[RMDB]
RNA sequence: GGGAACGACUCGAGUAGAGUCGAAAACGGCAAAAAAGCAAACUUGACCACCAAGGAUAAAAUAGAUCUUAUCCAAGGAUGCAAAAGAUAAUCUCACUUUUGACACCCACUGAUCUCGAACUUAAAGAAAACCGAGACUACUUCGGUAGUCUCGGAAGUCUUGAUUUCUCUUCGGAGAAAUCAAGACAAAAGAAACAACAACAACAAC
Reactivity to 2A3 in 0.01 (KOAc 150mM, MgCl2 10mM, bicine 150mM(pH8.5), 24C), signal-to-noise 2, nucleotides 027 to 156: c010g050g000c030a070a000a070a000a030a000g070c070a140a040a080c020u050u050g020a090c020c030a010c010c010a070a000g020g000a030u010a050a050a070a010u190a020g150a030u050c020u050u030a010u000c010c010a030a040g030g010a070u030g000c000a010a050a050a000g020a130u070a140a240u040c040u030c020a040c020u030u020u020u050g040a040c000a050c010c010c010a010c120u090g040a120u030c030u050c110g050a130a110c060u080u130a170a110a050g080a030a090a030a030c000c000g000a010g010a000c000u000a000c020u010u030c090g030g000u000a000g020u000c010u010c000g000g010a000a000

An RNA of 207 nucleotides, treated with 2A3 and read out base by base. Source: RMDB library M2RFPK, as collected in RNAgym. As a SHAPE reagent, 2A3 marks flexible, mostly unpaired nucleotides at the ribose 2'-OH.